An RNA of 207 nucleotides, treated with DMS and 2A3 and read out base by base. For DMS the reverse transcriptase was MarathonRT. Conditions: 150 mM KOAc, 10 mM MgCl2 and 150 mM bicine (pH 8.5), 24 C. For DMS, 2,251 sequencing reads were counted. For 2A3 the reverse transcriptase was SuperScript II with manganese.
[RMDB]
RNA sequence: GGGAACGACUCGAGUAGAGUCGAAAAACUGCCAUACGUGGCAGAAACACGCCUUACCAGGACUAAACAGCGUGUCUAAAAAUCAGUCCUUCAUACCUGAUCUGGAGGGUAGAUCAGGAAUACUAAAAAAAUCGGGUGAAGUUCGCUUCACCCGAAACAUAAAAUACAGCUUCGGCUGUAUUUUAUGAAAAGAAACAACAACAACAAC
Reactivity to DMS in 0.01 (KOAc 150mM, MgCl2 10mM, bicine 150mM(pH8.5), 24C), signal-to-noise 1, nucleotides 027 to 156: a130c010u010g010c000c010a040u000a080c240g010u000g020g060c000a020g020a080a150a050c000a030c030g020c010c030u000u000a080c050c030a060g010g020a070c040u010a200a100a120c060a060g000c010g030u020g070u010c170u010a020a060a100a110a100u010c100a100g000u030c000c000u000u000c050a160u000a190c000c010u000g000a030u000c010u000g030g010a100g010g030g000u000a030g000a010u000c000a010g010g020a050a060u000a170c100u000a000a010a050a070a130a130a130u000c000g000g000g030u000g030a020a010g020u000u010c300g030c020u000u000c000a050c020c000c000g010a000a010a020
Reactivity to 2A3 in 0.01 (KOAc 150mM, MgCl2 10mM, bicine 150mM(pH8.5), 24C), signal-to-noise 3, nucleotides 027 to 156: a000c000u000g000c000c000a010u030a060c160g080u050g020g000c000a010g010a000a010a000c010a000c010g010c000c010u030u050a030c020c050a010g000g010a010c000u050a060a070a040c010a010g000c010g010u010g010u050c090u040a020a020a010a010a020u040c030a010g000u000c010c000u030u110c060a090u070a160c000c000u000g000a000u010c000u020g050g050a060g070g060g030u060a000g000a000u000c010a010g010g040a000a000u090a040c060u100a060a020a030a040a010a050a090u050c010g010g010g010u000g000a000a000g000u030u130c150g060c090u000u000c000a000c000c000c010g000a010a000a000